Structure probing data (DMS and 2A3) for a 177-nucleotide construct. For 2A3, 5,594 sequencing reads were counted.
RNA sequence: GGGAACGACUCGAGUAGAGUCGAAAAUAAUUACGCGGCCGUACGAUGCCGCGGCAUUAUACGUAGCAUCGAUUAGCGCCGUAGCGCUAAUGCUAUACGGCAUCGCGAUGCCGUAAUUAAUGCCGUAUCACCUACUCCUAUUCGUAGGAGUAGGUGAAAAAGAAACAACAACAACAAC
Reactivity to DMS in 0.01 (KOAc 150mM, MgCl2 10mM, bicine 150mM(pH8.5), 24C), signal-to-noise 5, nucleotides 027 to 126: u010a080a080u000u020a070c090g010c010g010g000c010c080g000u000a090c200g010a130u000g020c010c020g020c020g010g000c020a010u000u000a020u000a050c070g000u000a140g020c010a030u000c070g000a100u010u010a110g020c210g020c000c270g010u000a030g010c080g000c080u020a070a040u010g010c020u000a110u000a030c020g000g010c000a070u000c200g010c080g000a030u000g010c030c000g000u000a010a050u010u000a010a020u000g010c010c050g000u000a160
Reactivity to 2A3 in 0.01 (KOAc 150mM, MgCl2 10mM, bicine 150mM(pH8.5), 24C), signal-to-noise 4, nucleotides 027 to 126: u080a010a070u100u130a060c060g000c010g000g020c020c010g110u160a100c090g090a130u120g020c000c000g020c000g000g000c000a010u010u010a020u010a040c060g040u080a030g020c000a010u030c020g130a130u080u110a030g050c010g000c090c030g070u010a020g000c010g000c030u120a140a050u230g000c010u030a040u010a110c010g000g010c010a030u090c030g040c020g060a000u010g000c000c010g010u030a030a060u070u030a010a010u010g010c000c000g000u040a100
For 2A3 the reverse transcriptase was SuperScript II with manganese. The reactions ran in a buffer of 150 mM KOAc, 10 mM MgCl2 and 150 mM bicine (pH 8.5), at 24 C.